An RNA of 177 nucleotides, treated with DMS and read out base by base.
[RMDB]
RNA sequence: GGGAACGACUCGAGUAGAGUCGAAAAGAUAUGGAAUGUUCUCGAUGGAAAGAGUAAAGCAACAGCCACCCAUCGGAAACGAUGGAGUGGACAUGCUUUACUCUUUCCAUCGAGACAUUCCUAAGUCCCUAUUCUAAAGGUUCGCCUUUAGAAUAGGAAAAGAAACAACAACAACAAC
Reactivity to DMS in 0.01 (KOAc 150mM, MgCl2 10mM, bicine 150mM(pH8.5), 24C), signal-to-noise 4, nucleotides 027 to 126: g000a090u010a300u010g000g000a020a020u000g000u000u000c000u000c000g010a010u010g000g010a030a010a020g010a020g020u000a000a000a000g010c000a040a080c300a220g000c000c000a000c000c010c000a020u000c000g010g010a150a120a160c010g010a010u000g000g010a160g030u000g000g000a020c090a080u000g000c000u000u000u000a000c000u000c000u000u000u000c000c000a000u010c000g000a000g000a010c010a000u000u000c000c000u000a030a090g000u010c040
It was measured as part of the RMDB library TTRINS. The reactions ran in a buffer of 150 mM KOAc, 10 mM MgCl2 and 150 mM bicine (pH 8.5), at 24 C.